The record gives the reactivity of an RNA of 177 nucleotides to DMS.
For DMS the reverse transcriptase was MarathonRT.
Source: RMDB library M2PK90, as collected in RNAgym.
Conditions: 150 mM KOAc, 10 mM MgCl2 and 150 mM bicine (pH 8.5), 24 C.
Reactivities are given for positions 27 through 126.
RNA sequence: GGGAACGACUCGAGUAGAGUCGAAAAAAAAAGGAACUAUGUUCAGGCAUGAAGCCUCCACGUGCGUGCGAAAGCACCCGGAAACGCCUGAGCAUAGUUCCGAGCUGAAGGAGGCACGGCUCAAAAACUAACCGAAGGGAUUCGUCCCUUCGGUUAGAAAAGAAACAACAACAACAAC
Reactivity to DMS in 0.01 (KOAc 150mM, MgCl2 10mM, bicine 150mM(pH8.5), 24C), signal-to-noise 1, nucleotides 027 to 126: a000a070a040a130a070g000g000a010a000c000u000a010u010g010u000u010c010a010g000g000c000a070u000g000a110a050g020c030c010u000c000c000a300c020g010u010g020c100g030u010g010c000g030a140a090a130g010c000a000c020c080c000g000g030a030a100a180c160g010c000c020u000g000a000g000c000a020u000a000g000u000u000c010c040g000a000g010c000u000g000a010a030g020g030a030g010g000c020a230c020g000g010c030u010c010a060a040a100a100a110